[RMDB]
The data come from the RNA Mapping Database (RMDB), library OK3TST. This 207-nucleotide RNA was probed chemically with 2A3 and DMS. 2A3 adducts were read by reverse transcription with SuperScript II with manganese. The 2A3 profile rests on 1,847 reads.
RNA sequence: GGGAACGACUCGAGUAGAGUCGAAAAACUGCGCCGCGUACGUGUUCCUGCUCACCUCAGCGAUGUGAUCGUAUACGAGCAGACGUACGAAGAAGCGCUAGAAGGUCUGGUCUUCGUGGGCGUAGACUCUCGCGGGCGCAAGCAGUACUUCUAUGGAAAUCAUCAUUGACUUCGGUCAAUGAUGAUUAAAAGAAACAACAACAACAAC
Reactivity to 2A3 in 0.01 (KOAc 150mM, MgCl2 10mM, bicine 150mM(pH8.5), 24C), signal-to-noise 2, nucleotides 027 to 156: a010c080u080g000c030g000c000c020g030c000g020u000a050c000g010u040g160u150u150c000c030u010g000c010u010c010a070c040c050u160c130a050g000c000g050a070u120g180u170g300a150u010c010g030u070a040u030a170c100g000a000g010c020a000g000a010c010g000u020a010c030g020a000a010g020a000a000g000c020g000c020u010a010g010a070a010g110g030u020c020u050g030g010u000c010u140u160c150g080u300g010g000g030c020g020u060a050g030a020c010u020c000u030c110g000c010g000g010g000c020g000c040a020a000g050c020a010g060u000a040c020u050u000c010u070a200u150g100g050a080
Reactivity to DMS in 0.01 (KOAc 150mM, MgCl2 10mM, bicine 150mM(pH8.5), 24C), signal-to-noise 1, nucleotides 027 to 156: a040c020u000g010c000g000c000c050g010c000g020u000a070c020g050u010g020u000u000c180c030u000g020c020u000c010a270c120c170u010c070a130g020c000g000a170u000g000u020g010a080u000c030g010u000a300u000a120c090g000a020g010c010a050g020a100c000g000u000a020c000g000a040a050g010a080a090g040c060g050c000u000a000g020a070a040g020g010u000c020u000g010g010u000c010u000u000c160g000u000g040g010g020c020g000u010a020g010a040c010u000c020u010c010g010c050g020g030g020c030g050c010a150a110g010c000a090g020u000a050c080u010u000c030u000a140u000g010g010a200